This 177-nucleotide RNA was probed chemically with 2A3 and DMS. The RNA was probed in 150 mM KOAc, 10 mM MgCl2 and 150 mM bicine (pH 8.5) at 24 C. The data come from the RNA Mapping Database (RMDB), library TTRDES.

[RMDB]
RNA sequence: GGGAACGACUCGAGUAGAGUCGAAAAGAUAUGGAGCGACCUAAGGGAGCCUGAGUGUCGGAAACGACACGAAGGCGAGGAUCUUACAUGGUCGCUCCUAAGUCAAACGCAACAGUUCGCUGUUGCGCUAUUCAGACUCCUUCGGGAGUCUGAAUAGAAAAGAAACAACAACAACAAC
Reactivity to 2A3 in 0.01 (KOAc 150mM, MgCl2 10mM, bicine 150mM(pH8.5), 24C), signal-to-noise 2, nucleotides 027 to 126: g040a000u080a040u130g000g000a020g000c010g020a000c010c000u030a040a040g070g000g000a040g000c000c010u030g010a010g020u010g030u030c020g020g030a110a060a030c020g000a000c000a020c000g000a020a010g000g040c000g000a020g000g000a010u040c010u070u110a130c090a300u270g000g000u000c000g010c000u000c000c000u010a000a000g010u000c020a000a070a010c040g000c010a000a000c000a030g080u160u150c300g020c180u010g010u030u000g020c000g000
Reactivity to DMS in 0.01 (KOAc 150mM, MgCl2 10mM, bicine 150mM(pH8.5), 24C), signal-to-noise 3, nucleotides 027 to 126: g000a060u000a300u010g000g020a020g030c000g010a000c000c010u000a060a040g000g000g000a060g040c000c000u000g000a300g010u010g030u000c010g010g010a090a120a220c000g000a010c000a010c000g010a280a020g030g010c010g030a050g000g000a040u010c010u000u010a090c300a080u010g010g010u000c000g000c000u020c000c000u010a000a070g000u000c070a110a100a300c010g020c000a010a000c010a010g000u000u010c260g000c000u010g010u000u000g000c000g020